Chemical mapping of a 177-nucleotide RNA with DMS and 2A3. High DMS reactivity at an A or C suggests that its Watson-Crick edge is free. For DMS, 2,776 sequencing reads were counted. Reactivities are given for positions 27 through 126. The reactions ran in a buffer of 150 mM KOAc, 10 mM MgCl2 and 150 mM bicine (pH 8.5), at 24 C.
[RMDB]
RNA sequence: GGGAACGACUCGAGUAGAGUCGAAAACAGUCGCGAGGCGUAAAACCGUCAUGUGCGGUGACGAGAUUAAUCGCGGCACUCGGCAGACGACCAUUACGUUUAAAAACAUCGCUGGAGGCAGCAAAAACGUAAAUACUCACUUCGGUGAGUAUUUACGAAAAGAAACAACAACAACAAC
Reactivity to DMS in 0.01 (KOAc 150mM, MgCl2 10mM, bicine 150mM(pH8.5), 24C), signal-to-noise 3, nucleotides 027 to 126: c110a100g040u010c030g010c010g010a040g010g020c010g000u000a050a070a120a070c060c010g010u010c050a090u000g050u020g040c090g020g020u000g010a030c010g000a110g010a090u000u020a100a120u010c030g000c010g000g010c010a070c020u020c030g000g010c020a060g000a040c040g020a070c080c100a100u000u010a030c060g010u010u000u010a030a060a050a070a070c120a110u000c110g000c050u000g000g000a140g000g000c050a070g020c120a070a020a050a050a120
Reactivity to 2A3 in 0.01 (KOAc 150mM, MgCl2 10mM, bicine 150mM(pH8.5), 24C), signal-to-noise 3, nucleotides 027 to 126: c020a010g040u030c000g010c030g040a030g050g010c010g000u040a050a060a050a100c030c000g010u030c060a210u160g110u130g070c040g000g000u010g020a010c050g010a010g000a090u150u130a060a140u070c020g010c000g030g010c020a050c030u040c020g050g010c040a040g000a080c020g050a060c000c020a060u090u110a040c050g020u020u080u130a060a130a010a000a020c050a040u060c040g000c030u060g020g050a050g100g000c020a020g030c000a130a040a000a000a000